[RMDB]
RNA sequence: GGGAACGACUCGAGUAGAGUCGAAAAGCUCUGCGUUUCGACGCAGAGCAAAAAAACCUUUGUGAGCAGGGCCUCGAGGAUCUAACGCUCCCAUUGGGAGCAGUUAGGGAGAGGCCUGCUCACUCUGGUAAAAAAUCAACCUAUUCGUAGGUUGAAAUGUGCAUUAAUUAUUCGUAAUUAAUGCACAAAAAGAAACAACAACAACAAC
Reactivity to 2A3 in 0.01 (KOAc 150mM, MgCl2 10mM, bicine 150mM(pH8.5), 24C), signal-to-noise 1, nucleotides 027 to 156: g000c000u020c000u020g000c010g010u090u080u170c240g050a020c000g000c000a000g000a000g020c000a000a010a030a010a000a000a000c000c000u000u000u000g010u010g010a000g000c000a020g130g140g180c000c000u070c000g080a300g020g040a010u000c000u000a000a000c000g000c020u000c000c040c060a300u200u300g030g000g010a010g000c100a100g030u000u000a000g010g000g010a040g020a000g000g030c010c010u000g010c000u000c000a000c000u000c000u000g000g000u060a090a160a000a000a020a020u030c000a000a000c000c000u030a020u060u080c230g070u080a010g010g000u000u000g020a000a020a070
Reactivity to DMS in 0.01 (KOAc 150mM, MgCl2 10mM, bicine 150mM(pH8.5), 24C), signal-to-noise 1, nucleotides 027 to 156: g020c000u010c010u010g030c000g000u000u000u020c250g010a110c030g040c000a040g050a020g030c000a000a000a000a130a040a010a020c000c000u000u000u010g000u000g000a020g050c000a040g030g010g000c040c020u020c000g000a120g020g030a100u000c010u010a020a010c030g020c000u000c010c030c010a300u000u030g030g020g010a010g020c010a000g010u000u000a030g000g000g000a140g020a070g020g020c000c000u000g000c000u010c010a000c010u000c020u020g000g020u030a000a010a050a090a080a090u010c000a010a010c000c000u000a030u000u010c300g060u000a010g020g010u020u020g010a010a080a010